[RMDB]
RNA sequence: GGGAACGACUCGAGUAGAGUCGAAAAUAGCAGUCUUUCGAGACUGCUACAUUAAUAGUCGCUAGAAAACGAUCAAAACUAGCCACUAACAUAACGAUCGAAAAGACGCACCCUUCGGGGUGCGUAAACUAUAUGUACGUUUCGACGUACAUAUAGUAAAAGAAACAACAACAACAAC
Reactivity to 2A3 in 0.01 (KOAc 150mM, MgCl2 10mM, bicine 150mM(pH8.5), 24C), signal-to-noise 6, nucleotides 027 to 126: u040a000g000c000a000g010u000c000u030u100u140c200g070a010g000a010c000u000g000c000u000a000c000a000u010u040a020a040u030a040g010u000c020g000c010u010a010g050a090a160a050a090c070g040a080u050c050a020a050a020a080c010u010a010g000c020c030a020c010u160a260a020c040a150u150a120a050c070g020a020u040c030g030a030a040a020a090g150a020c010g010c000a000c010c000c000u020u040c190g050g010g000g000u010g000c000g000u010a000a000
Reactivity to DMS in 0.01 (KOAc 150mM, MgCl2 10mM, bicine 150mM(pH8.5), 24C), signal-to-noise 7, nucleotides 027 to 126: u000a010g010c010a000g010u000c000u000u000u010c150g020a030g000a010c000u000g000c000u000a000c060a060u010u010a110a110u000a020g020u000c300g000c010u000a010g000a050a050a060a110c030g010a020u000c030a130a060a100a070c010u000a010g000c010c060a020c010u000a050a100c160a070u010a080a100c230g000a030u000c010g010a150a050a080a140g010a030c000g010c000a010c000c000c000u000u010c180g030g000g000g010u000g010c000g010u000a000a030

Chemical mapping of a 177-nucleotide RNA with 2A3 and DMS. 2A3 is a SHAPE reagent: it acylates the 2'-hydroxyl of flexible nucleotides of all four kinds. For DMS the reverse transcriptase was MarathonRT. Reactivities are given for positions 27 through 126. DMS (dimethyl sulfate) methylates the pairing face of unpaired adenines and cytosines.